[RMDB]
RNA sequence: GGGAACGACUCGAGUAGAGUCGAAAAGAUAUGGACUACUGCUAAUACGUGACUGGAGCCUAUGAGGGAUCGGAAACGAUCCCUCCGCUAGGCUAUGAAGGUCACGUAUAACAGUAGUCCUAAGUCAAAGACUUAGUAUGUUCGCAUACUAAGUCAACAACUUACCAUGGUUCGCCAUGGUAAGUUGAAAAGAAACAACAACAACAAC
Reactivity to 2A3 in 0.01 (KOAc 150mM, MgCl2 10mM, bicine 150mM(pH8.5), 24C), signal-to-noise 3, nucleotides 027 to 156: g030a030u070a040u120g000g000a000c000u000a000c000u000g020c030u070a120a060u000a060c000g000u000g000a000c010u010g000g030a000g000c010c000u040a060u170g000a000g000g010g000a000u000c000g020g050a060a130a030c000g010a000u000c000c010c000u000c000c000g000c000u000a010g010g000c010u020a080u010g000a010a000g000g000u000c000a000c000g000u000a000u000a000a000c010a000g000u000a000g000u000c000c000u000a000a000g000u000c010a010a090a060g000a000c000u000u000a000g000u000a000u010g030u060u090c290g000c170a000u000a000c000u000a000a000g000u000c000a000a010
Reactivity to DMS in 0.01 (KOAc 150mM, MgCl2 10mM, bicine 150mM(pH8.5), 24C), signal-to-noise 2, nucleotides 027 to 156: g010a120u000a250u010g020g050a010c010u000a000c000u020g020c020u000a140a090u000a020c010g030u000g000a030c000u000g000g000a040g030c020c010u000a030u020g000a140g030g030g000a000u000c000g020g000a150a090a260c020g030a010u000c000c000c000u000c000c010g000c000u000a010g030g010c000u010a020u010g000a150a300g010g000u000c000a020c000g010u010a000u000a060a010c000a020g030u000a000g000u000c000c000u000a000a050g020u000c020a080a130a150g000a020c000u000u000a060g000u000a000u000g010u000u000c300g030c000a020u000a020c000u000a010a030g010u000c000a030a130